Structure probing data (2A3 and DMS) for a 207-nucleotide construct.
DMS adducts were read by reverse transcription with MarathonRT.
For 2A3, 4,379 sequencing reads were counted.
The RNA was probed in 150 mM KOAc, 10 mM MgCl2 and 150 mM bicine (pH 8.5) at 24 C.
Source: RMDB library RNAMAK, as collected in RNAgym.
The DMS profile rests on 2,491 reads.
Values cover nucleotides 27 to 156.

RNA sequence: GGGAACGACUCGAGUAGAGUCGAAAAGGGGUCAAUCCUACAACGCAGUAGCUUUUGACGCUCUGAAGCCUCCACGGAGCGAUAAGCUACUGAACUACGUUGUGAGGAUUGACGGAGGCACCCAAAAGGCUAAUGGGGCUUCGGCCCCAUUAGCCAAGCUAUAAUACUCGUUCGCGAGUAUUAUAGCAAAAGAAACAACAACAACAAC
Reactivity to 2A3 in 0.01 (KOAc 150mM, MgCl2 10mM, bicine 150mM(pH8.5), 24C), signal-to-noise 2, nucleotides 027 to 156: g060g000g020g000u000c000a010a000u010c000c000u020a000c010a000a000c000g020c020a000g000u010a000g000c010u090u160u180u300g120a070c040g000c000u010c000u010g020a110a010g000c000c000u000c010c010a020c010g010g000a000g010c010g060a060u100a220a060g000c000u000a000c000u000g000a010a010c060u150a040c050g010u000u010g030u080g160a040g010g000a000u000u000g000a000c010g000g010a000g020g000c000a020c000c000c010a060a110a010a030g040g000c000u010a000a000u000g010g010g000g000c000u010u070c150g050g000c020c000c020c000a000u000u000a000g000c010c000a000a000
Reactivity to DMS in 0.01 (KOAc 150mM, MgCl2 10mM, bicine 150mM(pH8.5), 24C), signal-to-noise 1, nucleotides 027 to 156: g030g000g070g020u020c000a010a000u010c020c000u040a040c010a040a040c000g020c010a040g030u000a000g010c040u000u000u010u000g000a280c090g010c000u020c010u000g020a060a150g000c000c000u000c020c080a300c050g010g010a020g020c000g020a110u010a050a040g020c000u010a070c020u010g000a070a150c040u020a160c000g000u070u000g020u010g010a060g010g000a040u000u010g000a040c000g010g000a020g060g010c030a100c030c030c020a100a070a190a100g060g010c000u000a020a030u010g000g020g050g000c040u010u020c260g060g010c020c000c040c010a010u000u000a000g020c000c000a000a040